[RMDB]
An RNA of 177 nucleotides, treated with 2A3 and DMS and read out base by base. It was measured as part of the RMDB library 15KREP.

RNA sequence: GGGAACGACUCGAGUAGAGUCGAAAAAAACUGCUGUUAGUAAGCUUCUAGAUACAUGUUUUGAAGCUACAGAAGCAACAUUUAACUUCUUGUUAGAUUUGGCAGGAUUGUUCAGAAUCUUUCUCCGCACAUGAUAUGUGUUCGCACAUAUCAUGUGAAAAGAAACAACAACAACAAC
Reactivity to 2A3 in 0.01 (KOAc 150mM, MgCl2 10mM, bicine 150mM(pH8.5), 24C), signal-to-noise 4, nucleotides 027 to 126: a000a000a000c040u020g010c000u010g010u090u060a040g020u040a180a020g000c000u000u000c030u040a030g010a050u090a140c100a120u200g060u010u060u020u030g020a010a000g000c010u000a000c000a010g100a040a010g020c010a010a030c010a010u060u070u050a030a020c010u030u020c010u130u120g010u020u030a060g040a290u100u040u170g020g000c020a000g030g040a070u090u080g030u080u090c060a030g050a110a060u030c020u010u040u000c040u010c010c030g030
Reactivity to DMS in 0.01 (KOAc 150mM, MgCl2 10mM, bicine 150mM(pH8.5), 24C), signal-to-noise 6, nucleotides 027 to 126: a020a050a100c090u010g000c000u000g010u020u010a110g010u000a060a070g000c010u000u000c000u000a040g010a070u000a110c270a110u010g000u000u000u000u000g000a020a010g010c000u000a010c030a070g000a110a050g000c030a050a070c130a060u000u000u000a030a040c040u000u000c150u000u000g010u000u000a040g000a080u000u000u000g010g010c020a020g010g000a080u000u000g010u000u000c110a100g010a060a050u000c090u000u000u000c020u000c040c210g000